Chemical mapping of a 207-nucleotide RNA with DMS and 2A3. The RNA was probed in 150 mM KOAc, 10 mM MgCl2 and 150 mM bicine (pH 8.5) at 24 C.
RNA sequence: GGGAACGACUCGAGUAGAGUCGAAAAGAAUCACCGUACCUAUUUAGGUUUACGCUCCAAGAUCGGUGGAUAGCAGCCCUAUCAAUAUCUAGGAGAACUGUGCUAUGUUUAGAAGAUAAGGUAGUCUAUUACACAGCCAUGUUCGCAUGGCUGUGAAUGGUUGAAGAUACUUCGGUAUCUUCAACCAAAAAGAAACAACAACAACAAC
Reactivity to DMS in 0.01 (KOAc 150mM, MgCl2 10mM, bicine 150mM(pH8.5), 24C), signal-to-noise 2, nucleotides 027 to 156: g000a120a120u000c020a100c050c000g000u000a070c030c050u000a230u000u000u010a030g020g010u000u000u000a080c040g000c050u000c020c040a120a090g020a080u000c030g000g040u010g020g000a050u000a050g030c050a240g020c100c110c020u010a080u000c030a090a140u000a120u010c040u000a110g000g030a170g000a060a090c060u020g010u000g020c020u000a090u010g000u010u010u010a080g000a100a110g010a070u000a040a060g020g030u000a090g020u000c040u000a130u000u010a180c000a020c000a010g000c010c000a020u000g040u000u000c250g030c020a010u010g000g000c020u000g000u000g000a000a050
Reactivity to 2A3 in 0.01 (KOAc 150mM, MgCl2 10mM, bicine 150mM(pH8.5), 24C), signal-to-noise 2, nucleotides 027 to 156: g100a020a040u130c000a010c020c000g020u030a010c010c010u130a210u180u300u300a000g010g010u060u000u050a090c080g020c030u040c040c020a030a020g030a080u010c070g000g030u020g100g010a010u000a020g060c050a060g020c020c020c000u000a030u050c060a120a010u020a010u250c020u020a020g030g020a030g110a030a060c030u090g000u030g070c000u020a010u070g070u020u120u020a110g030a130a000g000a040u040a050a000g080g060u010a010g010u040c060u060a100u060u120a090c010a000c000a010g030c000c000a000u000g040u020u060c120g020c170a000u000g010g000c010u010g030u000g000a000a000